[RMDB]
RNA sequence: GGGAACGACUCGAGUAGAGUCGAAAAAGAACUUUAAUAGUCGAUAAUGUAGAGCGUAGGUAUGUUACCCAUAGGUGUCCUAGAGAGCUCACUAGUUUUCUUAAUACUAUUUACAAAGCCGCUGUCGUGUCCUAGCGAUAUUCGUAUCGCUAGGACAAAAAGAAACAACAACAACAAC
Reactivity to 2A3 in 0.01 (KOAc 150mM, MgCl2 10mM, bicine 150mM(pH8.5), 24C), signal-to-noise 1, nucleotides 027 to 126: a000g150a000a000c010u000u060u090a170a020u220a060g090u030c030g120a120u040a120a000u210g160u200a020g000a000g000c000g100u050a010g010g010u000a000u120g100u000u130a120c000c000c000a080u130a060g130g000u100g000u040c000c000u080a060g000a010g000a000g190c000u030c000a070c050u050a030g000u140u000u000u000c040u040u200a080a010u060a140c000u080a070u190u000u000a080c060a050a080a000g000c060c110g000c140u050g000u050c000g130
Reactivity to DMS in 0.01 (KOAc 150mM, MgCl2 10mM, bicine 150mM(pH8.5), 24C), signal-to-noise 1, nucleotides 027 to 126: a090g010a140a110c170u020u000u040a120a010u020a020g000u010c000g000a030u010a070a120u030g000u020a130g030a030g000c070g000u040a070g000g000u000a100u000g000u000u050a060c050c030c040a270u000a100g000g000u000g040u000c110c000u000a070g000a110g000a110g010c030u010c120a100c200u010a020g000u020u000u000u000c100u000u000a100a170u020a040c050u030a040u000u000u060a030c070a050a100a100g070c020c000g010c110u000g000u000c040g000
The record gives the reactivity of an RNA of 177 nucleotides to 2A3 and DMS. For DMS, 1,471 sequencing reads were counted. For 2A3 the reverse transcriptase was SuperScript II with manganese. Conditions: 150 mM KOAc, 10 mM MgCl2 and 150 mM bicine (pH 8.5), 24 C.